[RMDB]
RNA sequence: GGGAACGACUCGAGUAGAGUCGAAAAGAGUCCUGUAUCAGGAGCCUUCUCAAGCUUUGCCGCGCAUGGGAUUACUGCGGAUUUCGGGGUUUUUAACCCCACCUUUUCCGGCGCCUAGAGUGAACUGACAGUGUGCAAUUUUCGAAUUGCACACUGUAAAAGAAACAACAACAACAAC
Reactivity to DMS in 0.01 (KOAc 150mM, MgCl2 10mM, bicine 150mM(pH8.5), 24C), signal-to-noise 3, nucleotides 027 to 126: g030a140g030u000c010c000u000g060u060a100u010c050a050g020g000a030g010c040c040u000u000c000u010c040a120a160g010c000u000u020u010g010c100c190g010c080g000c050a050u020g010g000g010a050u000u020a040c160u000g030c100g000g010a130u000u010u000c170g020g000g020g000u010u000u010u020u030a010a070c010c000c000c010a010c060c010u000u010u000u010c040c020g010g030c040g020c030c030u010a060g010a110g010u000g010a090a110c120u010g010
Reactivity to 2A3 in 0.01 (KOAc 150mM, MgCl2 10mM, bicine 150mM(pH8.5), 24C), signal-to-noise 4, nucleotides 027 to 126: g060a020g050u010c020c000u010g100u090a140u160c080a020g100g020a060g060c000c020u090u000c030u020c030a030a020g000c020u070u070u090g060c040c040g030c010g010c030a130u130g040g000g060a050u040u110a100c050u100g070c050g020g070a090u080u080u110c080g010g010g000g040u010u010u000u020u280a060a070c000c000c010c000a020c000c000u010u050u040u000c010c000g030g000c010g010c000c010u050a030g000a000g070u060g050a100a040c010u030g060